[RMDB]
RNA sequence: GGGAACGACUCGAGUAGAGUCGAAAAGCUGGAACCAGCCAUGUGGACAAAUGAAAAAAUGCCUUUUGUCUACAGAUUGCAGCGAUCCUACAUAAAUAUAUGGAGGUCUCUGUCUGGCUUAGGACAGCAAGGUUAAGAGGUUCGCCUCUUAACCUUGAAAAGAAACAACAACAACAAC
Reactivity to 2A3 in 0.01 (KOAc 150mM, MgCl2 10mM, bicine 150mM(pH8.5), 24C), signal-to-noise 9, nucleotides 027 to 126: g000c000u010g020g030a050a060c010c000a010g000c000c000a050u020g000u010g000g010a000c010a010a010a030u120g220a110a060a070a050a030a090u290g070c030c000u020u010u010u000g000u000c000u000a000c000a020g090a090u100u300g010c000a000g000c010g010a050u190c010c010u030a030c010a010u130a070a300a010u300a040u050a010u110g010g000a020g000g010u000c010u000c000u020g090u060c060u040g010g000c000u060u120a040g010g010a020c000a000g000
Reactivity to DMS in 0.01 (KOAc 150mM, MgCl2 10mM, bicine 150mM(pH8.5), 24C), signal-to-noise 9, nucleotides 027 to 126: g000c010u000g010g010a090a070c030c020a140g010c010c010a180u010g010u000g000g010a010c000a000a010a010u020g010a010a030a110a110a140a100u060g010c220c030u000u000u000u000g000u000c000u010a000c000a030g010a160u030u020g000c010a000g000c050g010a020u040c000c000u000a040c010a010u010a030a100a150u040a090u010a030u000g010g000a050g000g000u000c000u000c010u000g000u010c200u010g000g010c010u000u020a150g000g010a160c010a010g000
Source: RMDB libraries RFM100 and RFMREP, as collected in RNAgym. Structure probing data (2A3 and DMS) for a 177-nucleotide construct. Values cover nucleotides 27 to 126. For DMS the reverse transcriptase was MarathonRT.